This 177-nucleotide RNA was probed chemically with DMS and 2A3.
As a SHAPE reagent, 2A3 marks flexible, mostly unpaired nucleotides at the ribose 2'-OH.
Conditions: 150 mM KOAc, 10 mM MgCl2 and 150 mM bicine (pH 8.5), 24 C.
For DMS the reverse transcriptase was MarathonRT.
RNA sequence: GGGAACGACUCGAGUAGAGUCGAAAACAAUACCCUCGCGUGACCUAUGUCUAGGGGUGAAAGGCCCAUCGAAUCCGGAAACAGCUGGUUCCGACCGAAACAUGUCGAAGCAUGACCUCUGCCGAGGCGAGACCAGACAAUUCGUUGUCUGGUCUCGAAAAGAAACAACAACAACAAC
Reactivity to DMS in 0.01 (KOAc 150mM, MgCl2 10mM, bicine 150mM(pH8.5), 24C), signal-to-noise 2, nucleotides 027 to 126: c190a120a280u020a100c070c000c000u010c050g000c090g020u000g000a030c030c130u000a060u010g010u000c040u000a110g040g010g000g020u010g000a060a110a130g000g040c010c010c000a170u000c010g000a080a040u000c010c040g000g000a100a040a050c060a120g000c090u010g000g010u000u000c010c060g070a080c060c030g040a070a100a080c090a010u000g000u000c020g000a080a090g000c080a080u010g010a100c040c030u000c000u000g000c140c060g020a070g000g000
Reactivity to 2A3 in 0.01 (KOAc 150mM, MgCl2 10mM, bicine 150mM(pH8.5), 24C), signal-to-noise 3, nucleotides 027 to 126: c020a000a070u170a180c010c000c010u000c050g050c030g080u070g020a120c000c030u090a050u160g070u040c050u050a040g000g050g000g000u030g030a040a060a010g100g010c000c000c000a040u040c020g020a030a040u000c020c000g030g040a020a060a080c050a030g040c060u100g070g000u070u000c010c020g020a030c020c020g040a040a060a030c050a050u160g000u070c060g030a050a030g050c020a060u120g030a040c000c010u030c020u040g040c050c040g000a010g050g000
DMS (dimethyl sulfate) methylates the pairing face of unpaired adenines and cytosines.